[RMDB]
RNA sequence: GGGAACGACUCGAGUAGAGUCGAAAACUGAGGCUUGGGCAAGGCGUCAUAAAUCAGAGCUAUCCUAAGGCACAAACCCGAUGCCUUAGGGAGAGCUAAGGGUUGUAGGAGCUUAGAGAGCCUGUGGAAGGGCGAGCUAACUUCCGAAUCCUAAAACCAUUUCGAUAUUCUUCGGAAUAUCGAAAUGAAAAGAAACAACAACAACAAC
Reactivity to 2A3 in 0.01 (KOAc 150mM, MgCl2 10mM, bicine 150mM(pH8.5), 24C), signal-to-noise 4, nucleotides 027 to 156: c040u070g040a020g020g040c030u040u050g000g020g020c040a060a030g030g000c020g050u040c030a080u140a150a080a060u140c080a060g030a020g170c010u020a050u110c000c010u010a020a000g010g010c000a010c030a040a160a130c040c020c040g050a130u020g000c000c000u000u000a000g000g010g010a060g000a000g000c010u040a070a110g030g010g000u010u050g000u040a050g010g010a010g010c030u030u030a010g020a010g000a010g070c000c040u060g020u090g100g100a110a110g030g000g000c010g000a020g000c010u020a020a010c000u120u020c000c010g010a030a040u020c000c020u070a050a050a010a050c020
Reactivity to DMS in 0.01 (KOAc 150mM, MgCl2 10mM, bicine 150mM(pH8.5), 24C), signal-to-noise 2, nucleotides 027 to 156: c050u000g010a060g030g010c010u020u010g030g010g030c010a070a140g030g000c000g020u000c040a100u000a030a080a060u020c060a130g020a080g040c020u000a040u000c010c000u000a060a050g000g000c000a000c040a050a050a180c010c000c010g000a120u010g000c000c010u010u020a050g040g020g020a050g000a060g010c020u010a060a090g000g010g000u000u000g010u010a100g020g010a050g010c050u000u000a070g010a130g000a300g020c000c020u040g000u010g040g020a180a190g010g020g030c040g030a100g000c000u010a090a040c020u000u010c010c000g040a060a140u000c010c030u000a030a050a080a120c150
Record summary: This 207-nucleotide RNA was probed chemically with 2A3 and DMS. The reactions ran in a buffer of 150 mM KOAc, 10 mM MgCl2 and 150 mM bicine (pH 8.5), at 24 C.